[RMDB]
RNA sequence: GGGAACGACUCGAGUAGAGUCGAAAAGAAUGAUAGAUUACCCCUUGUGUAACCUUGAAUGAAAAGUGAUUAUCAGUGGCCUCUAAUAGCCAAAAAAGAGAGACAACCAGACAUAUGCUGCUUGAUGGAAACAUCUAGUACCACCUAUGCGGUAUUAGUCAUGACUAAAUUUCGAUUUAGUCAUGACAAAAGAAACAACAACAACAAC
Reactivity to 2A3 in 0.01 (KOAc 150mM, MgCl2 10mM, bicine 150mM(pH8.5), 24C), signal-to-noise 3, nucleotides 027 to 156: g060a020a070u170g040a060u090a170g050a040u030u120a090c020c020c020c020u040u100g020u010g020u110a050a040c020c020u060u080g060a070a050u070g060a080a100a020a080g060u050g040a090u040u080a040u140c040a050g040u020g050g010c030c020u050c000u060a070a170u100a190g020c000c000a060a000a000a000a020a020g130a000g010a000g020a010c020a010a010c030c030a020g070a070c020a090u120a030u130g020c030u000g010c000u030u030g000a010u000g030g000a010a030a000c000a000u000c000u020a000g000u030a040c020c030a020c000c010u050a060u110g010c030g000g000u040a040u040u030a030
Reactivity to DMS in 0.01 (KOAc 150mM, MgCl2 10mM, bicine 150mM(pH8.5), 24C), signal-to-noise 3, nucleotides 027 to 156: g010a140a170u020g000a180u010a040g020a120u000u000a080c000c010c190c150u000u020g010u000g000u000a020a070c040c020u010u000g010a220a080u010g010a050a090a110a150g030u000g030a130u000u000a050u010c030a180g030u000g020g010c010c020u010c060u010a080a130u010a100g010c030c050a000a020a040a050a090a070g010a080g010a120g010a050c040a070a050c020c010a100g000a060c040a100u010a090u010g040c030u000g010c030u010u000g000a060u010g020g000a110a140a110c040a040u000c040u000a030g010u000a040c020c010a010c050c080u000a090u020g010c020g020g010u000a020u000u000a110
Record summary
This 207-nucleotide RNA was probed chemically with 2A3 and DMS. For DMS, 4,667 sequencing reads were counted. The data come from the RNA Mapping Database (RMDB), library OK3TST.